RNA sequence: GGGAACGACUCGAGUAGAGUCGAAAAAGGAGCUGCCAGCACUAAGCCGGACGGCGCCCUCGCACCAGAUCCUCUGUGGGCUUGCCCUCAAGAUCGCAUCGGUGUUGAGGCCCUGUCCGCCGCUGCGGAAACCGAAGAACUUCGGUUCUUCGGUUUCAAAAGAAACAACAACAACAAC
Reactivity to 2A3 in 0.01 (KOAc 150mM, MgCl2 10mM, bicine 150mM(pH8.5), 24C), signal-to-noise 1, nucleotides 027 to 126: a020g120g010a040g050c050u050g100c110c020a020g000c000a010c090u140a030a010g060c030c020g000g010a010c000g000g030c040g010c050c000c000u010c010g030c000a010c010c000a020g010a010u000c010c020u010c000u000g040u000g000g000g010c060u100u090g040c000c000c000u000c010a040a030g010a000u000c010g000c050a240u170c150g000g000u020g040u090u300g000a000g000g000c000c010c010u030g020u000c010c000g020c030c020g000c010u030g010c050g020
Reactivity to DMS in 0.01 (KOAc 150mM, MgCl2 10mM, bicine 150mM(pH8.5), 24C), signal-to-noise 1, nucleotides 027 to 126: a070g010g010a100g010c040u020g000c110c010a030g020c010a110c090u000a080a000g040c150c020g000g000a030c000g000g000c200g050c140c010c000u000c020g000c030a010c020c000a100g000a010u000c000c020u010c020u010g000u000g000g030g010c050u030u000g020c060c000c010u000c000a020a070g000a060u000c010g020c160a130u010c140g000g000u000g000u000u020g020a020g010g000c050c100c010u000g020u000c000c000g000c030c290g010c000u000g000c110g040